[RMDB]
RNA sequence: GGGAACGACUCGAGUAGAGUCGAAAAGAUCAGAGACGGUUCGUACCAACACAAAUUCAGAGAUUUUCUCAGAAUCAGAUCUCAGAUUGUUGCGAGUAUCAACAUCGGGGGACCAAAACAAGCCCGAACAUACUAAGACGUUCGCGUCUUAGUAUGUAAAAGAAACAACAACAACAAC
Reactivity to DMS in 0.01 (KOAc 150mM, MgCl2 10mM, bicine 150mM(pH8.5), 24C), signal-to-noise 4, nucleotides 027 to 126: g010a030u000c060a100g020a100g030a070c100g010g010u000u000c090g020u010a120c050c050a090a110c120a040c140a070a070a080u000u000c040a110g020a040g010a100u010u000u010u000c030u010c080a110g010a060a060u000c130a040g030a060u000c020u000c040a060g000a070u000u000g020u000u000g010c150g000a110g020u000a060u010c090a040a030c080a060u000c040g020g000g000g010g000a100c100c060a040a060a060a100c130a100a190g010c000c000c010g010a060
Reactivity to 2A3 in 0.01 (KOAc 150mM, MgCl2 10mM, bicine 150mM(pH8.5), 24C), signal-to-noise 2, nucleotides 027 to 126: g010a080u100c060a010g000a020g020a080c060g030g000u030u040c020g020u060a060c030c030a120a050c080a000c020a100a170a060u180u120c110a040g030a000g030a060u030u020u300u010c060u020c010a070g040a050a060u050c040a030g090a190u000c010u000c030a040g060a090u060u120g000u030u000g040c020g030a040g060u090a060u120c020a030a070c010a070u060c020g010g000g000g020g000a010c000c060a000a060a110a000c050a030a020g020c010c020c020g000a000
This 177-nucleotide RNA was probed chemically with DMS and 2A3.
The RNA was probed in 150 mM KOAc, 10 mM MgCl2 and 150 mM bicine (pH 8.5) at 24 C.
2A3 is a SHAPE reagent: it acylates the 2'-hydroxyl of flexible nucleotides of all four kinds.
For 2A3 the reverse transcriptase was SuperScript II with manganese.
Source: RMDB library OK2TRN, as collected in RNAgym.
DMS adducts were read by reverse transcription with MarathonRT.
Values cover nucleotides 27 to 126.